[RMDB]
Chemical mapping of a 177-nucleotide RNA with 2A3 and DMS. The RNA was probed in 150 mM KOAc, 10 mM MgCl2 and 150 mM bicine (pH 8.5) at 24 C. In probing experiments dimethyl sulfate is read out at A N1 and C N3, which are open when not base-paired. For DMS, 1,976 sequencing reads were counted.
RNA sequence: GGGAACGACUCGAGUAGAGUCGAAAAGAUAUGGACGCUCAUGACAUGCCUAUGCUCGGAAACGAGCAGUAGGCAACAGCAUGGCGUCCUAAGUCAAAACACGAUUGUAGUUCGCUACAAUCGUGAAGUUGUAUUCUUGCUUCGGCAAGAAUACAACAAAAGAAACAACAACAACAAC
Reactivity to 2A3 in 0.01 (KOAc 150mM, MgCl2 10mM, bicine 150mM(pH8.5), 24C), signal-to-noise 2, nucleotides 027 to 126: g000a010u020a010u080g030g000a020c020g030c030u300c300a030u030g030a300c070a190u300g030c010c000u010a020u020g000c000u000c000g010g020a040a010a020c010g000a000g000c000a000g000u020a000g010g000c040a010a010c030a010g020c000a000u000g010g000c000g000u000c000c000u000a020a000g000u000c000a010a010a070a100c020a020c000g000a010u000u020g000u000a030g060u090u070c300g020c140u010a010c000a000a000u000c060g000u000g010a010a000
Reactivity to DMS in 0.01 (KOAc 150mM, MgCl2 10mM, bicine 150mM(pH8.5), 24C), signal-to-noise 2, nucleotides 027 to 126: g000a030u000a220u000g000g000a000c000g010c020u030c010a010u000g000a060c090a280u020g000c000c000u000a030u010g010c000u000c000g030g000a050a050a080c000g020a000g010c000a010g040u010a000g000g010c000a020a040c160a200g000c000a000u000g000g000c020g010u000c000c010u000a010a070g020u000c020a100a100a160a300c010a010c010g010a030u000u000g020u000a010g000u000u030c270g030c000u000a000c000a010a000u000c000g010u000g000a040a030